[RMDB]
RNA sequence: GGGAACGACUCGAGUAGAGUCGAAAACACAGCCUGCGGAUAGUUCCCGGUGGCAAUCAUGGCCCGGGCCUGCUGAAGCAGUUCCUGAAUGUACUGGAGCAUGAUGUCGUAGCCGAUAUAGUCCGUCCACAAGGAUUAAGUUCGCUUAAUCCUUGUGAAAAGAAACAACAACAACAAC
Reactivity to DMS in 0.01 (KOAc 150mM, MgCl2 10mM, bicine 150mM(pH8.5), 24C), signal-to-noise 9, nucleotides 027 to 126: c120a130c130a110g020c060c040u010g010c030g000g000a080u000a170g010u000u000c080c030c010g010g020u000g010g000c020a100a060u000c080a060u000g000g000c010c010c030g010g000g010c300c030u000g000c020u010g010a150a100g010c050a040g010u010u000c050c040u010g000a110a090u010g000u010a060c090u010g010g010a090g010c020a020u000g010a040u000g000u000c060g010u000a130g020c030c010g000a070u000a080u010a170g010u000c010c020g010u000c120
Reactivity to 2A3 in 0.01 (KOAc 150mM, MgCl2 10mM, bicine 150mM(pH8.5), 24C), signal-to-noise 7, nucleotides 027 to 126: c050a000c010a020g080c010c010u050g000c020g000g010a040u030a090g060u060u060c010c010c000g000g020u120g020g000c000a020a130u070c030a050u100g250g060c000c010c000g020g000g000c000c020u030g000c010u110g070a150a040g000c010a000g010u060u090c000c020u060g110a120a070u190g030u150a110c060u060g010g020a050g070c010a020u040g010a020u030g030u060c060g060u050a020g020c020c020g020a000u010a000u010a110g050u010c010c000g020u010c030
The record gives the reactivity of an RNA of 177 nucleotides to DMS and 2A3. The 2A3 profile rests on 16,540 reads. Reactivities are given for positions 27 through 126. The reactions ran in a buffer of 150 mM KOAc, 10 mM MgCl2 and 150 mM bicine (pH 8.5), at 24 C. For 2A3 the reverse transcriptase was SuperScript II with manganese.